This 177-nucleotide RNA was probed chemically with DMS and 2A3. It was measured as part of the RMDB library RFMREP. The RNA was probed in 150 mM KOAc, 10 mM MgCl2 and 150 mM bicine (pH 8.5) at 24 C.
[RMDB]
RNA sequence: GGGAACGACUCGAGUAGAGUCGAAAAGUGAUAUGCAAAAAAGACAAAGUUGACAUCAGUUAACUUUUACCUUUAUUCUACUUUCCCCAAAGUAAGAAUAAUCUAACCCCUUUGAGAUGAGCAAAAGCGAUAGUCAGAUGUUCGCAUCUGACUAUCGAAAAGAAACAACAACAACAAC
Reactivity to DMS in 0.01 (KOAc 150mM, MgCl2 10mM, bicine 150mM(pH8.5), 24C), signal-to-noise 1, nucleotides 027 to 126: g030u020g030a090u020a130u000g030c100a010a080a160a040a060a040g030a070c110a000a000a040g030u000u000g000a030c030a180u000c230a100g010u000u000a020a010c010u020u000u020u000a100c070c000u000u000u000a030u000u000c010u010a030c030u000u000u000c050c020c000c110a170a020a020g000u000a000a050g000a010a010u000a060a060u000c010u000a030a160c100c020c030c050u000u000u010g010a070g020a060u000g000a100g010c070a060a010a120a080g000
Reactivity to 2A3 in 0.01 (KOAc 150mM, MgCl2 10mM, bicine 150mM(pH8.5), 24C), signal-to-noise 1, nucleotides 027 to 126: g020u030g010a040u130a100u300g090c100a140a110a000a000a050a000g030a040c040a010a010a010g010u000u000g010a020c010a110u210c110a220g000u010u000a000a000c000u080u000u000u180a040c000c010u030u010u050a030u010u020c030u020a000c000u020u010u010c010c010c010c020a000a000a030g010u010a100a000g010a000a040u040a020a030u000c030u030a040a150c000c000c010c040u070u090u000g130a130g020a100u130g030a080g060c040a060a060a030a040g070